[RMDB]
RNA sequence: GGGAACGACUCGAGUAGAGUCGAAAAUCCACUAUGAAUCUAGUCACUAAAUAAACACAAUUAGCUACUGUAUGUAAUAGUGAGUGUUGAUAACACAAAAUAAUAGUAUAGUUUUGGAAGAUUAUACGCGCCCUUGCUCCGUUCGCGGAGCAAGGAACAAUAGAACAUGCUUCGGCAUGUUCUAUUGAAAAGAAACAACAACAACAAC
Reactivity to DMS in 0.01 (KOAc 150mM, MgCl2 10mM, bicine 150mM(pH8.5), 24C), signal-to-noise 2, nucleotides 027 to 156: u010c020c010a080c030u000a040u000g010a170a100u010c090u000a080g020u000c120a120c050u010a020a040a190u010a120a130a080c150a080c130a130a180u000u010a150g020c030u010a020c010u010g010u010a060u000g010u000a080a130u000a070g020u000g020a170g020u000g010u000u000g000a160u000a080a170c050a080c030a030a020a070a100u000a120a300u000a100g000u000a020u000a010g020u010u000u000u010g010g040a180a150g000a010u000u000a020u000a030c010g000c110g010c080c000c000u000u000g000c000u000c000c000g000u000u020c300g020c020g060g020a020g010c000a000a000g020g010a050a020
Reactivity to 2A3 in 0.01 (KOAc 150mM, MgCl2 10mM, bicine 150mM(pH8.5), 24C), signal-to-noise 5, nucleotides 027 to 156: u000c010c000a010c020u040a030u110g060a110a030u000c090u060a040g050u030c050a000c030u050a040a030a120u190a110a290a040c140a020c050a110a180u060u020a030g020c010u030a010c010u020g050u190a040u040g020u050a030a020u010a040g020u020g070a070g030u020g030u010u050g120a240u140a180a020c020a000c010a020a100a040a020u200a100a080u110a120g010u010a000u000a020g020u010u040u080u130g120g040a110a050g000a090u030u010a010u010a020c030g030c010g040c030c010c000u010u000g000c000u000c000c000g010u020u030c100g000c010g110g000a000g010c000a000a000g000g000a000a000